[RMDB]
RNA sequence: GGGAACGACUCGAGUAGAGUCGAAAAGAAUGCAAGAAUAGUCAAGCACGGUGGGUUCAAUCUAAAAAUGAAGAAACGCGUUGAGGUUCACUAAACACAGAUUUUGAAUGUGUCGACACCGUCCAUAGUUUACGUGGAAUUUCGAUUCCACGUAAACAAAAGAAACAACAACAACAAC
Reactivity to 2A3 in 0.01 (KOAc 150mM, MgCl2 10mM, bicine 150mM(pH8.5), 24C), signal-to-noise 2, nucleotides 027 to 126: g110a040a010u060g010c040a020a030g020a120a160u150a100g090u050c010a030a020g030c010a010c050g000g020u010g000g040g000u030u040c010a020a020u020c030u170a100a040a050a050a070u160g000a120a110g040a020a060a000c070g010c040g000u040u040g010a040g050g060u040u010c040a020c040u070a060a120a000c030a000c010a080g030a170u090u080u200u250g130a140a090u020g020u000g010u000c040g010a030c010a000c040c040g000u020c000c010a060u050a140
Reactivity to DMS in 0.01 (KOAc 150mM, MgCl2 10mM, bicine 150mM(pH8.5), 24C), signal-to-noise 3, nucleotides 027 to 126: g040a100a100u000g000c010a070a170g000a090a130u010a110g000u000c080a110a160g020c060a040c050g000g000u000g000g000g000u000u000c080a060a020u000c020u000a000a080a080a140a040u010g010a020a100g000a100a100a100c110g010c140g010u000u010g010a110g000g000u010u010c090a070c130u000a050a020a030c030a000c110a060g000a130u000u010u010u010g020a070a060u010g010u000g010u010c070g020a110c070a020c030c030g010u010c040c030a090u020a110